[RMDB]
RNA sequence: GGGAACGACUCGAGUAGAGUCGAAAACGCUCGGCGCACUCGCGCAAGGCGCGGCGAUCGUCGCCGGCUUUCUGUCGCUGUCGUGCGCGCUGAGCGCAUGGCCUGCAUUCGUCGCCGGCUGCGCGAACGAUCGAGUCAGGUUCGCCUGACUCGAUCGAAAAGAAACAACAACAACAAC
Reactivity to 2A3 in 0.01 (KOAc 150mM, MgCl2 10mM, bicine 150mM(pH8.5), 24C), signal-to-noise 2, nucleotides 027 to 126: c010g000c010u000c030g050g000c010g000c010a030c010u050c020g000c010g010c060a020a020g180g000c300g000c020g240g040c000g050a120u210c140g290u160c020g080c000c000g010g000c000u030u090u060c080u080g230u220c030g000c040u180g060u210c070g000u000g020c000g000c000g030c000u090g000a010g000c020g020c010a010u110g100g020c000c010u020g010c020a080u120u140c100g080u140c040g000c000c040g000g050c100u080g000c040g000c010g030a090a060
Reactivity to DMS in 0.01 (KOAc 150mM, MgCl2 10mM, bicine 150mM(pH8.5), 24C), signal-to-noise 1, nucleotides 027 to 126: c050g000c030u000c030g000g030c000g000c020a050c030u010c180g020c010g010c070a050a040g000g000c010g000c010g020g010c010g000a250u020c220g010u010c020g020c000c010g000g010c020u020u000u000c160u000g000u010c070g020c030u020g030u020c160g030u010g050c050g050c000g010c130u010g010a040g010c010g020c040a040u000g000g030c000c030u010g030c090a160u010u000c060g000u020c080g000c010c030g040g000c050u010g010c080g010c040g000a020a100